[RMDB]
RNA sequence: GGGAACGACUCGAGUAGAGUCGAAAAGGGGUCAAGUGCGGAGGAAGAUUUGUCAGGCUUGGUUCUGAAGCCUCCACGGAACCAAGAGCCUUGGAUUUAAUCUUUGAAACACUUGACGGAGGCACCCAAAAGUGAGGAAGUUUCGACUUCCUCACAAACAAGGUACACUCUUCGGAGUGUACCUUGUAAAAGAAACAACAACAACAAC
Reactivity to 2A3 in 0.01 (KOAc 150mM, MgCl2 10mM, bicine 150mM(pH8.5), 24C), signal-to-noise 1, nucleotides 027 to 156: g150g040g010g020u000c000a010a000g000u010g000c110g010g130a060g190g220a040a070g000a070u150u030u150g120u170c090a020g000g040c030u010u030g020g000u000u000c010u010g010a060a010g010c010c000u000c000c000a020c000g000g000a000a000c010c020a030a010g080a130g120c050c000u040u190g080g000a000u120u250u240a040a040u030c010u020u040u130g130a090a100a000c000a000c000u000u000g000a010c000g000g000a000g000g000c010a050c000c000c000a030a140a040a010g010u010g020a000g000g000a000a000g010u000u000u290c190g020a010c000u010u000c000c000u000c000a000c000a000a000